[RMDB]
Notes: The data come from the RNA Mapping Database (RMDB), libraries RFM100 and RFMREP. The record gives the reactivity of an RNA of 177 nucleotides to 2A3 and DMS. Conditions: 150 mM KOAc, 10 mM MgCl2 and 150 mM bicine (pH 8.5), 24 C.
RNA sequence: GGGAACGACUCGAGUAGAGUCGAAAAGGAUAACCGUGGUAAUUCUAGAGCUAAUACAUGCUAAAAACCUCGACUUCGGAAGGGGUGUAUUUAUUAGAUAAAAAACCAAUGCCCUUCGGGGCUCCUUGAUAGGUAAUUAGUUCGCUAAUUACCUAUCAAAAGAAACAACAACAACAAC
Reactivity to 2A3 in 0.01 (KOAc 150mM, MgCl2 10mM, bicine 150mM(pH8.5), 24C), signal-to-noise 9, nucleotides 027 to 126: g050g010a070u080a150a040c050c030g060u050g000g010u070a110a120u130u060c050u090a090g010a050g140c000u000a010a010u020a060c020a020u050g020c020u110a120a090a070a090a090c000c000u010c000g040a050c040u090u090c220g090g020a040a020g020g000g000g000u030g000u010a010u000u040u010a030u000u010a010g030a040u180a070a110a010a020a010a010c010c000a050a060u080g000c000c000c000u010u050c150g010g000g010g010c010u030c010c000u000u010
Reactivity to DMS in 0.01 (KOAc 150mM, MgCl2 10mM, bicine 150mM(pH8.5), 24C), signal-to-noise 3, nucleotides 027 to 126: g000g010a110u030a090a130c070c090g000u000g010g000u000a030a060u000u030c070u000a080g000a140g010c030u020a030a020u000a050c100a020u010g000c070u030a070a070a100a100a050c000c000u000c010g000a270c040u020u030c180g010g020a050a240g000g000g010g010u000g000u000a010u020u010u000a010u020u010a010g000a060u030a000a030a090a060a080a050c050c010a060a060u030g010c010c000c020u000u040c120g030g000g000g020c010u000c030c020u030u000